[RMDB]
RNA sequence: GGGAACGACUCGAGUAGAGUCGAAAACUGGCCCUUUGAAACCAGACCCUCAUUGCGCGGGUGGAAGACAAUCUUGCCGAACGUAUCAGGGUAAACGCGCCUGAUCUGAUUAACCAGGCUCAUCUGCUCGACGCUUUCUAACGGGCAUUUGCCGCGAAUAUCACAGCGGAUUCGUCCGCUGUGAUAUAAAAGAAACAACAACAACAAC
Reactivity to 2A3 in 0.01 (KOAc 150mM, MgCl2 10mM, bicine 150mM(pH8.5), 24C), signal-to-noise 2, nucleotides 027 to 156: c030u010g030g020c040c050c000u140u100u190g090a130a050a040c040c000a030g030a120c000c000c000u110c110a130u050u220g010c010g020c000g000g010g020u020g040g010a050a030g090a110c110a110a140u040c060u140u190g000c000c000g050a070a040c040g020u090a010u010c010a000g000g000g070u120a060a160a190c110g000c040g110c060c000u040g000a020u030c000u040g040a200u110u060a070a020c160c010a020g020g000c020u000c040a060u020c010u010g000c010u010c030g160a150c000g040c060u050u070u020c040u060a130a060c010g000g010g000c020a020u060u090u290g010c020c020g170c030g040a040